The data come from the RNA Mapping Database (RMDB), library OK2TRN. Structure probing data (2A3 and DMS) for a 177-nucleotide construct.
RNA sequence: GGGAACGACUCGAGUAGAGUCGAAAAUGUUUUUGUGUAACUCUAUUGACAUGUAUAAAUCCAGGCCUCUUAUGUCGGGCCAGGGGUGGCCUGAUUCUUUAACUGCCAUUGAGUUCAAGCAGUUGGCUGGAUCUAAGAUAUUCGUAUCUUAGAUCCAAAAAGAAACAACAACAACAAC
Reactivity to 2A3 in 0.01 (KOAc 150mM, MgCl2 10mM, bicine 150mM(pH8.5), 24C), signal-to-noise 4, nucleotides 027 to 126: u070g050u000u080u040u050u100g130u040g040u090a030a030c010u000c030u080a110u090u100g020a030c010a030u120g070u120a140u040a200a070a030u030c040c010a010g060g000c030c010u040c030u150u150a140u230g070u070c030g020g040g000c010c010a010g030g010g010g020u040g020g000c000c010u030g020a030u050u010c010u010u090u050a060a030c010u010g040c030c000a060u050u100g060a060g100u080u120c020a050a030g000c020a040g030u060u070g060g030c060
Reactivity to DMS in 0.01 (KOAc 150mM, MgCl2 10mM, bicine 150mM(pH8.5), 24C), signal-to-noise 7, nucleotides 027 to 126: u000g010u000u000u000u010u010g010u000g010u010a050a040c040u000c020u010a060u010u000g000a040c020a030u000g010u010a100u000a050a060a060u010c100c050a060g010g010c010c010u000c060u000u010a090u010g010u000c050g010g000g010c060c040a060g010g010g010g020u000g010g010c010c010u000g000a060u000u000c100u000u000u000a040a050c030u000g010c010c040a070u000u000g010a070g000u000u000c080a090a130g010c040a050g020u000u000g010g020c150
For DMS, 15,756 sequencing reads were counted. The reactions ran in a buffer of 150 mM KOAc, 10 mM MgCl2 and 150 mM bicine (pH 8.5), at 24 C.